Conditions: 150 mM KOAc, 10 mM MgCl2 and 150 mM bicine (pH 8.5), 24 C. Chemical mapping of a 177-nucleotide RNA with DMS and 2A3.

[RMDB]
RNA sequence: GGGAACGACUCGAGUAGAGUCGAAAACGUACGUUCAUAUUUGAACGUUCUGCCGGAAUGCAUUAUCAAUAGAGGUAAAGUCGCAACCCCAAAUCGUAAAGGAAACCGUAGCACGUCUUAAGCAAGAAAGUGUGUGACGUUUCGACGUCACACACUUAAAAGAAACAACAACAACAAC
Reactivity to DMS in 0.01 (KOAc 150mM, MgCl2 10mM, bicine 150mM(pH8.5), 24C), signal-to-noise 1, nucleotides 027 to 126: c110g050u050a040c000g060u050u000c000a060u000a170u040u010u010g020a010a010c000g000u000u020c020u020g030c000c040g030g040a060a050u000g020c130a030u000u010a030u020c020a110a040u000a020g010a130g000g060u000a020a060a210g000u010c050g000c010a070a070c020c000c000c110a060a070a060u000c100g020u030a050a020a150g000g000a020a040a000c060c050g020u010a060g040c020a020c000g000u000c090u000u000a020a120g000c230a070a070g040a090
Reactivity to 2A3 in 0.01 (KOAc 150mM, MgCl2 10mM, bicine 150mM(pH8.5), 24C), signal-to-noise 1, nucleotides 027 to 126: c030g030u020a000c000g000u010u020c040a030u140a140u260u240u260g040a040a000c000g000u010u020c030u030g010c000c010g000g020a100a040u040g000c010a010u000u020a070u090c110a050a100u090a200g080a000g060g010u040a050a040a000g010u020c040g040c040a030a000c000c000c000c000a040a080a030u060c040g070u120a030a060a000g140g000a170a000a000c050c000g010u040a000g000c020a000c000g110u000c010u040u050a080a010g100c000a020a010g080a100

High DMS reactivity at an A or C suggests that its Watson-Crick edge is free.